[RMDB]
RNA sequence: GGGAACGACUCGAGUAGAGUCGAAAACAUUGUGAUUGGAAACUCCAGAAUCAGUAAGUCACUGGCCAUCGGCUCACUUCUCCUUCACACCCUGGCGAUGCCGGCCACCUCAACGUGGUGCCAGGGUGAACUACGCCGCGUUCGCGCGGCGUAGUUCAAAAGAAACAACAACAACAAC
Reactivity to 2A3 in 0.01 (KOAc 150mM, MgCl2 10mM, bicine 150mM(pH8.5), 24C), signal-to-noise 1, nucleotides 027 to 126: c040a000u150u000g010u110g110a160u000u030g000g000a240a000a000c010u020c000c000a020g060a050a040u050c020a000g130u120a230a000g000u090c000a000c120u000g050g020c050c000a040u000c080g030g010c040u020c000a040c030u040u000c010u000c050c000u000u300c050a070c000a000c130c000c000u000g000g030c020g280a220u140g030c020c050g000g000c000c000a010c000c000u250c140a180a000c050g000u000g000g020u080g010c000c000a010g000g020g000u000
The record gives the reactivity of an RNA of 177 nucleotides to 2A3.
Values are in units of 0.01, from 0 to 300, in steps of 10.
The reactions ran in a buffer of 150 mM KOAc, 10 mM MgCl2 and 150 mM bicine (pH 8.5), at 24 C.
The data come from the RNA Mapping Database (RMDB), library OK1LIB.